[RMDB]
RNA sequence: GGGAACGACUCGAGUAGAGUCGAAAAUGAUGCACAACUCCAGGGACAACGUCAAAAGUACCGCCCUAUGUCUUGUCUCCUCGUGGUGUCGAAGCAAUGGCGGAGUCCUAGGCACCACAGCUCCUCGCCCAUAUAGCUUCUUCGGAAGCUAUAUGGGAAAAGAAACAACAACAACAAC
Reactivity to 2A3 in 0.01 (KOAc 150mM, MgCl2 10mM, bicine 150mM(pH8.5), 24C), signal-to-noise 2, nucleotides 027 to 126: u070g010a010u080g040c030a000c010a130a130c040u050c040c030a040g010g000g040a020c020a090a020c110g030u050c040a070a090a000a090g040u040a080c020c000g030c010c030c020u100a110u100g000u000c040u040u060g020u020c020u020c040c010u090c060g040u020g000g030u000g000u000c040g020a030a000g030c040a000a110u190g010g040c080g150g040a020g060u060c010c010u020a030g000g000c000a020c000c000a010c000a000g000c000u040c010c010u030c040g060
Reactivity to DMS in 0.01 (KOAc 150mM, MgCl2 10mM, bicine 150mM(pH8.5), 24C), signal-to-noise 2, nucleotides 027 to 126: u000g000a060u010g010c070a040c070a080a060c060u010c060c080a080g010g020g020a030c030a060a050c130g010u020c080a060a080a060a110g000u000a090c050c040g020c030c040c030u000a120u010g000u000c030u000u000g020u000c040u000c040c060u000c130g030u000g010g000u000g020u000c020g010a120a130g000c110a040a120u000g000g010c030g010g010a100g020u010c020c030u000a170g000g000c010a000c010c000a010c000a090g000c030u000c030c030u000c100g020